The data come from the RNA Mapping Database (RMDB), library OK2TRN. This 177-nucleotide RNA was probed chemically with 2A3 and DMS.

RNA sequence: GGGAACGACUCGAGUAGAGUCGAAAAGGAGGUAGACUUUGAGGAUUCUGGAGAAGGGAAGGUGGUCAAGCGUAAGAGGGUGCACAAGAAACCCACUUUUGCUGCAAUCUUGUGUGCUGAUGCCAAGCCGUAGAACGUCUUUCGAGACGUUCUACGGAAAAGAAACAACAACAACAAC
Reactivity to 2A3 in 0.01 (KOAc 150mM, MgCl2 10mM, bicine 150mM(pH8.5), 24C), signal-to-noise 2, nucleotides 027 to 126: g050g020a020g050g030u070a040g010a110c040u060u060u190g060a070g050g000a100u030u100c040u130g030g030a020g000a060a010g040g020g010a050a030g050g000u060g000g070u040c030a080a010g030c050g040u050a080a020g060a020g050g000g020u020g000c030a030c020a050a000g030a040a060a040c010c170c000a060c010u180u110u120u180g040c100u010g020c010a040a120u000c000u010u000g010u020g010u000g000c040u000g010a050u080g060c030c000a030a030g000
Reactivity to DMS in 0.01 (KOAc 150mM, MgCl2 10mM, bicine 150mM(pH8.5), 24C), signal-to-noise 2, nucleotides 027 to 126: g030g000a040g030g010u010a050g000a100c120u000u000u000g020a090g020g020a120u010u000c040u010g000g010a070g000a080a090g000g000g000a060a070g020g020u000g000g010u010c070a060a040g000c080g000u000a060a110g010a180g010g000g020u000g000c000a020c060a020a030g030a030a070a160c170c200c000a060c090u000u010u010u000g000c100u010g020c050a050a150u000c020u000u020g000u010g010u000g010c010u030g000a070u010g000c060c090a040a120g020
The RNA was probed in 150 mM KOAc, 10 mM MgCl2 and 150 mM bicine (pH 8.5) at 24 C.
DMS adducts were read by reverse transcription with MarathonRT.